The data come from the RNA Mapping Database (RMDB), library RFMREP. An RNA of 177 nucleotides, treated with 2A3 and DMS and read out base by base. For 2A3 the reverse transcriptase was SuperScript II with manganese. The reactions ran in a buffer of 150 mM KOAc, 10 mM MgCl2 and 150 mM bicine (pH 8.5), at 24 C. For DMS the reverse transcriptase was MarathonRT.
[RMDB]
RNA sequence: GGGAACGACUCGAGUAGAGUCGAAAAAGGUCUGACAGUCUAUCUUCCUAUGCUACUGUAAACCUUGGAACAUAGUCUAUCGGACCUGGAAAAUCCAGACUGAUCAAGUUCGCUUGAUCAGUCUGGACCCUAAUCCUAACUUCGGUUAGGAUUAGGGAAAAGAAACAACAACAACAAC
Reactivity to 2A3 in 0.01 (KOAc 150mM, MgCl2 10mM, bicine 150mM(pH8.5), 24C), signal-to-noise 4, nucleotides 027 to 126: a000g010g000u000c000u010g000a000c010a010g010u000c000u010a010u000c020u010u030c010c000u020a050u110g060c020u060a230c060u220g150u300a080a120a110c020c010u030u040g000g000a000a000c010a000u010a000g000u000c000u000a020u000c000g010g010a010c000c000u000g000g020a040a080a000a030u010c010c000a000g010a000c000u000g010a010u000c010a000a000g020u060u080c130g080c140u000u010g000a000u000c000a000g000u000c000u000g000g000a000
Reactivity to DMS in 0.01 (KOAc 150mM, MgCl2 10mM, bicine 150mM(pH8.5), 24C), signal-to-noise 4, nucleotides 027 to 126: a020g000g000u000c010u000g000a030c010a010g010u000c000u000a000u000c230u000u000c000c000u000a040u010g020c080u000a120c250u010g030u000a080a070a110c130c060u000u000g020g000a000a010c120a020u000a010g000u000c000u000a050u000c010g010g010a020c000c000u000g000g000a060a050a090a160u000c000c000a000g000a020c000u000g010a010u000c010a010a010g010u000u010c240g020c000u000u000g000a000u000c000a000g000u000c000u000g000g000a010